[RMDB]
RNA sequence: GGGAACGACUCGAGUAGAGUCGAAAAAAAGACACCUACAUGUGAGCCCAUUCACUUCUAAGACAGGUGGCCACCUAAGCAAGACCAUGGGGUGUCUUUCUGCUAAAUGUGAAAAGGCUGGCCCACCCAGACAGCCUAUUUUCGAAUAGGCUGUCUGAAAAGAAACAACAACAACAAC
Reactivity to 2A3 in 0.01 (KOAc 150mM, MgCl2 10mM, bicine 150mM(pH8.5), 24C), signal-to-noise 2, nucleotides 027 to 126: a000a040a010g030a000c010a010c030c020u080a150c090a040u030g040u030g020a000g010c020c010c040a060u130u070c020a010c050u090u070c020u130a120a110g120a090c050a020g030g010u010g030g000c040c020a080c000c030u040a060a020g000c010a010a000g050a130c070c010a010u030g000g000g050g000u000g000u020c000u010u000u000c000u000g000c010u130a090a110a200u190g050u060g200a110a130a010a030g000g010c030u000g030g000c000c030c000a020c010c030
Reactivity to DMS in 0.01 (KOAc 150mM, MgCl2 10mM, bicine 150mM(pH8.5), 24C), signal-to-noise 5, nucleotides 027 to 126: a010a030a030g010a030c010a000c000c010u000a120c050a040u000g020u000g020a100g000c030c100c110a150u010u010c070a030c060u000u010c090u010a100a080g010a090c210a070g010g010u000g000g000c110c040a070c050c040u000a100a100g000c050a030a070g010a230c120c000a010u010g000g000g000g010u010g000u000c000u000u000u000c010u010g020c100u000a060a090a070u010g010u010g010a040a070a080a080g000g010c200u000g010g010c070c020c020a050c070c060